[RMDB]
RNA sequence: GGGAACGACUCGAGUAGAGUCGAAAAAACAAUAUGAGUGGGACACUAUAAUUUAUAAUAAUAGUGCGAAUACUGCGUUUUCUUACAUGGCAUGAGAUGUAAGAAAACUAACAGUUAGAUUUAAACAUUCGUUAUAAUUGUUCGCAAUUAUAACGAAAAAAGAAACAACAACAACAAC
Reactivity to 2A3 in 0.01 (KOAc 150mM, MgCl2 10mM, bicine 150mM(pH8.5), 24C), signal-to-noise 4, nucleotides 027 to 126: a000a000c130a050a040u160a090u190g040a030g060u070g020g040g050a020c000a000c010u030a020u030a080a180u050u190u150a270u150a190a080u230a060a010u020a020g010u010g030c020g090a040a040u050a120c010u000g010c000g000u000u000u000u000c000u000u000a000c000a000u010g180g000c030a080u140g050a080g010a160u000g010u000a000a000g000a000a000a000a000c000u010a010a000c000a000g010u040u060a050g030a120u090u110u240a050a080a020c040a050
Reactivity to DMS in 0.01 (KOAc 150mM, MgCl2 10mM, bicine 150mM(pH8.5), 24C), signal-to-noise 4, nucleotides 027 to 126: a110a060c070a090a070u030a080u010g010a090g000u000g010g020g010a300c010a000c010u000a030u000a090a050u040u010u070a140u070a170a070u020a130a020u000a020g010u010g000c050g010a130a120u000a010c000u000g030c130g000u000u000u000u010c000u000u000a000c000a010u000g030g030c180a090u040g000a090g000a010u000g000u000a000a000g000a000a010a000a000c000u000a040a070c020a010g000u000u000a040g010a160u010u010u000a080a100a080c140a100
Chemical mapping of a 177-nucleotide RNA with 2A3 and DMS. DMS adducts were read by reverse transcription with MarathonRT. Source: RMDB libraries RFM100 and RFMREP, as collected in RNAgym. Conditions: 150 mM KOAc, 10 mM MgCl2 and 150 mM bicine (pH 8.5), 24 C.